[RMDB]
RNA sequence: GGGAACGACUCGAGUAGAGUCGAAAACAGGAAGCCAACUAUUAAGGGGAAACAAAAGUGUUCUUAGGAGUCCUGCUGUCACUGUGGAUUGAGCCGGUGAAGCCCUGAGGGAUUUCAUCGCUGAGGUGAUAAGGUUCAUAUUCGUAUGAACCUUAUCAAAAGAAACAACAACAACAAC
Reactivity to 2A3 in 0.01 (KOAc 150mM, MgCl2 10mM, bicine 150mM(pH8.5), 24C), signal-to-noise 9, nucleotides 027 to 126: c010a010g040g020a030a010g040c020c010a060a020c070u100a070u240u150a100a070g050g020g020g050a060a060a030c070a050a150a080a050g120u150g040u120u020c030u050u080a040g020g040a040g030u030c010c010u020g040c020u040g040u060c020a030c090u050g020u050g070g030a070u030u180g050a030g070c070c020g000g000u020g010a020a010g010c010c000c000u050g050a260g020g020g020a030u010u050u040c020a020u010c010g000c050u070g060a060g030g130u050
Reactivity to DMS in 0.01 (KOAc 150mM, MgCl2 10mM, bicine 150mM(pH8.5), 24C), signal-to-noise 9, nucleotides 027 to 126: c050a050g010g010a070a080g010c010c070a090a110c120u010a110u030u020a090a080g000g010g010g000a090a080a050c110a070a060a240a090g020u010g010u010u010c020u000u010a100g010g000a070g000u000c030c020u010g000c050u010g010u010c040a060c060u010g000u010g000g000a130u010u020g010a060g010c080c030g020g000u000g000a030a020g010c020c010c000u000g010a160g010g000g000a050u010u000u000c020a010u000c020g010c050u010g000a090g000g010u000
An RNA of 177 nucleotides, treated with 2A3 and DMS and read out base by base. For 2A3 the reverse transcriptase was SuperScript II with manganese. The data come from the RNA Mapping Database (RMDB), libraries RFM100 and RFMREP. Reactivities are given for positions 27 through 126. High 2A3 reactivity points to a flexible backbone, as in loops and unpaired stretches. The RNA was probed in 150 mM KOAc, 10 mM MgCl2 and 150 mM bicine (pH 8.5) at 24 C.